[RMDB]
RNA sequence: GGGAACGACUCGAGUAGAGUCGAAAAGGGGUCCAGCAAGAGCGUUUGACGGUACAGACAUGAGCUGAAGCCUCCACGGCUCAACAGCUGUACCCGAGCUCUGCUGGACGGAGGCACCCAAAACCUGUCUGCUAUGGUUCGCCAUAGCAGACAGGAACAGACUGCAAUAGUUCGCUAUUGCAGUCUGAAAAGAAACAACAACAACAAC
Reactivity to 2A3 in 0.01 (KOAc 150mM, MgCl2 10mM, bicine 150mM(pH8.5), 24C), signal-to-noise 5, nucleotides 027 to 156: g180g020g040g010u020c030c000a000g000c070a200a120g010a000g000c040g040u200u300u300g090a080c030g000g000u010a000c000a010g050a050c100a250u170g000a010g000c000u010g000a070a010g010c000c000u000c000c000a010c020g020g000c000u020c020a060a140c050a090g110c000u000g000u000a000c000c000c000g030a000g000c000u000c000u000g000c000u000g000g000a000c000g000g000a000g000g000c000a040c020c010c000a040a100a040a060c000c000u000g000u000c000u000g000c000u000a010u010g000g060u020u080c220g040c080c000a000u000a000g000c000a000g000a000c000a000g000g000a000a000
Reactivity to DMS in 0.01 (KOAc 150mM, MgCl2 10mM, bicine 150mM(pH8.5), 24C), signal-to-noise 1, nucleotides 027 to 156: g020g000g040g040u010c000c020a020g020c040a070a090g010a050g040c030g050u020u000u020g010a250c180g010g020u000a030c020a060g000a180c040a300u000g000a090g010c000u010g010a040a140g000c010c000u000c000c070a300c070g020g000c000u000c020a080a130c100a160g000c030u000g020u000a000c000c000c020g000a060g010c000u000c000u000g010c000u000g000g010a040c000g030g020a000g000g000c000a130c020c020c010a040a080a100a140c010c010u010g000u000c000u000g000c010u000a020u000g000g020u000u000c300g010c010c000a010u000a010g020c000a010g000a000c000a000g010g020a060a140
This 207-nucleotide RNA was probed chemically with 2A3 and DMS. Conditions: 150 mM KOAc, 10 mM MgCl2 and 150 mM bicine (pH 8.5), 24 C. For 2A3, 6,148 sequencing reads were counted.